[RMDB]
Source: RMDB library RFM100, as collected in RNAgym. Structure probing data (2A3) for a 177-nucleotide construct. For 2A3 the reverse transcriptase was SuperScript II with manganese. The RNA was probed in 150 mM KOAc, 10 mM MgCl2 and 150 mM bicine (pH 8.5) at 24 C.
RNA sequence: GGGAACGACUCGAGUAGAGUCGAAAACAUGCGUGCGAGUCGACGGGUUCUGAAACCUGGGAUGCGCAAGGAAGCUGACGAGCGGGAGGCCUUCACGGGCUGCACCGCUGGCCGACCCUGAUCUUCUCGUUUCAUUCCGUUUCGACGGAAUGAAACGAAAAGAAACAACAACAACAAC
Reactivity to 2A3 in 0.01 (KOAc 150mM, MgCl2 10mM, bicine 150mM(pH8.5), 24C), signal-to-noise 2, nucleotides 027 to 126: c010a030u180g030c000g030u040g010c000g000a050g050u020c000g030a200c020g000g000g000u060u040c100u300g070a070a060a040c010c000u030g100g000g000a020u040g010c000g000c000a000a030g100g020a110a100g000c040u050g040a060c000g070a010g000c020g000g000g020a010g090g000c000c000u080u120c040a020c070g000g000g040c000u030g000c170a060c030c060g000c010u000g000g000c040c020g050a080c000c030c000u080g060a020u000c000u020u010c030u010